[RMDB]
RNA sequence: GGGAACGACUCGAGUAGAGUCGAAAAGGAUUCUAUUUUAAAUAAAAGCUGAAAGGAUUGAUGAAGAUAAGAAUCUGUUAAUAACAACUACUUGAAGGCUUUACUCUUGUUCUUUAUCUGCUUUUAGCCUUGUAAUUAGAUGAACUUUAUAAGGAGCCUUGAUCUACUAGUUCGCUAGUAGAUCAAGAAAAGAAACAACAACAACAAC
Reactivity to 2A3 in 0.01 (KOAc 150mM, MgCl2 10mM, bicine 150mM(pH8.5), 24C), signal-to-noise 1, nucleotides 027 to 156: g010g000a010u020u080c040u050a030u020u140u000u290a160a160a070u180a090a110a000a000g020c020u130g030a100a010a020g060g070a140u130u110g000a010u110g040a000a020g030a030u000a110a060g000a010a010u000c010u000g010u040u110a210a160u190a110a000c090a090a090c070u200a010c000u030u130g040a030a090g020g000c000u050u110u140a040c010u000c000u020u040g010u140u000c000u010u050u020a120u030c010u040g040c000u000u050u050u030a030g000c000c010u030u000g060u100a020a090u080u030a010g010a050u050g000a160a180c020u000u030u000a060u070a170a020g110g000a000g020c170
This 207-nucleotide RNA was probed chemically with 2A3. Values cover nucleotides 27 to 156. It was measured as part of the RMDB library OK3TST.